Source: RMDB library OK2TRN, as collected in RNAgym.
This 177-nucleotide RNA was probed chemically with DMS and 2A3.
2A3 adducts were read by reverse transcription with SuperScript II with manganese.
The RNA was probed in 150 mM KOAc, 10 mM MgCl2 and 150 mM bicine (pH 8.5) at 24 C.
RNA sequence: GGGAACGACUCGAGUAGAGUCGAAAAAUCAGGAUCCUAGGAGCUAGCUAGUGAUCACGCUAGGAUCUCUAGGCGUACCUAGACUAGAGUAGUACCCAUGACUGAGUACCUCAUAUCAUGAUCAUGAGGUGUCGUACUUUUUCGAAAGUACGACACCAAAAGAAACAACAACAACAAC
Reactivity to DMS in 0.01 (KOAc 150mM, MgCl2 10mM, bicine 150mM(pH8.5), 24C), signal-to-noise 2, nucleotides 027 to 126: a140u000c060a040g020g010a050u000c030c010u000a040g000g010a100g000c030u000a040g000c030u000a140g020u000g000a070u000c090a110c170g000c050u000a010g010g010a130u000c080u020c010u010a030g040g010c250g010u000a080c040c000u000a060g030a070c070u010a040g000a080g010u000a040g030u000a060c010c010c010a060u000g000a110c270u010g000a050g010u000a040c070c030u000c060a030u010a050u000c130a060u000g010a100u000c050a050u010g000a090
Reactivity to 2A3 in 0.01 (KOAc 150mM, MgCl2 10mM, bicine 150mM(pH8.5), 24C), signal-to-noise 2, nucleotides 027 to 126: a000u080c050a020g080g020a040u000c000c000u000a030g010g010a030g050c030u030a010g000c000u010a010g070u050g180a070u100c050a000c040g000c010u010a010g060g080a300u010c090u010c000u070a010g060g000c020g070u060a150c000c010u030a030g060a070c000u010a040g010a000g040u110a020g000u030a070c000c000c020a060u090g060a060c090u020g000a010g050u120a090c000c030u030c040a070u080a010u140c080a090u090g120a080u050c030a060u040g040a080